[RMDB]
RNA sequence: GGGAACGACUCGAGUAGAGUCGAAAAGAAAAGAAAAUAAUGACCACUUAUACAUUUGGUGUAUACAAUAUAUACAUAUUACGUCUGGUAUAAGUUAAGCCUAACGGACAGGCGGGUCGGUUGCCGGCGUGUAGUAGGACUUCGGUCCUGCUACACGAAAAGAAACAACAACAACAAC
Reactivity to 2A3 in 0.01 (KOAc 150mM, MgCl2 10mM, bicine 150mM(pH8.5), 24C), signal-to-noise 9, nucleotides 027 to 126: g060a010a070a010a000g160a020a130a020a030u300a040a120u180g010a000c000c000a000c000u000u000a000u010a000c020a090u120u120u200g040g000u020g020u010a010u010a030c120a190a010u070a010u040a000u030a210c050a040u120a080u160u120a060c050g050u010c050u080g060g000u010a010u000a000a000g010u040u140a080a020g000c000c000u030a100a010c010g010g020a010c000a000g000g000c000g000g000g000u000c000g000g020u080u090g010c000c000g020g030
Reactivity to DMS in 0.01 (KOAc 150mM, MgCl2 10mM, bicine 150mM(pH8.5), 24C), signal-to-noise 8, nucleotides 027 to 126: g000a080a070a100a110g020a110a070a090a080u060a100a080u040g010a030c000c010a170c000u000u000a000u000a000c000a040u020u010u030g010g020u000g010u010a010u010a060c150a110a090u030a300u020a070u030a050c070a050u000a060u020u020a110c070g000u020c060u000g000g000u000a000u000a000a000g000u000u040a060a070g010c000c000u000a070a120c030g000g000a020c010a100g010g000c000g000g000g000u000c010g010g000u020u030g000c010c000g000g000